The data come from the RNA Mapping Database (RMDB), library OK2TRN. An RNA of 177 nucleotides, treated with DMS and 2A3 and read out base by base. 2A3 adducts were read by reverse transcription with SuperScript II with manganese. For DMS, 1,961 sequencing reads were counted. DMS adducts were read by reverse transcription with MarathonRT. The reactions ran in a buffer of 150 mM KOAc, 10 mM MgCl2 and 150 mM bicine (pH 8.5), at 24 C.
[RMDB]
RNA sequence: GGGAACGACUCGAGUAGAGUCGAAAAGGGCUGCUGAGAUACGUGCGUCUGCGAACCUGGCGGCGACCAAGAUGAGCGAGUGCGUGCUGGGGCAGAGCAAGCGGGUGGACUUCUGCGGGAAGGGGUAGAGUUUCCUAUGAUUCGUCAUAGGAAACUCAAAAGAAACAACAACAACAAC
Reactivity to DMS in 0.01 (KOAc 150mM, MgCl2 10mM, bicine 150mM(pH8.5), 24C), signal-to-noise 2, nucleotides 027 to 126: g000g010g000c050u010g000c050u000g000a150g010a100u010a050c100g010u000g000c040g010u020c030u020g040c010g000a150a180c010c020u000g010g010c060g010g010c060g000a090c070c050a080a090g000a070u000g010a230g000c070g010a070g030u000g010c020g000u000g010c010u000g010g000g010g010c030a010g000a100g000c050a040a080g010c090g000g010g000u000g000g000a160c140u010u000c120u000g000c110g000g000g010a080a080g000g000g010g040u010a100
Reactivity to 2A3 in 0.01 (KOAc 150mM, MgCl2 10mM, bicine 150mM(pH8.5), 24C), signal-to-noise 2, nucleotides 027 to 126: g080g010g000c040u050g000c030u040g090a010g010a170u120a080c090g030u030g020c020g190u070c010u040g020c020g030a060a050c010c020u020g020g000c040g030g040c050g060a090c010c010a060a060g050a180u160g020a060g040c040g010a050g040u060g040c020g010u090g000c000u040g000g050g000g000c010a010g030a020g040c020a020a060g010c070g020g040g020u150g080g000a080c090u110u000c030u120g020c040g000g030g050a080a040g000g000g000g000u010a040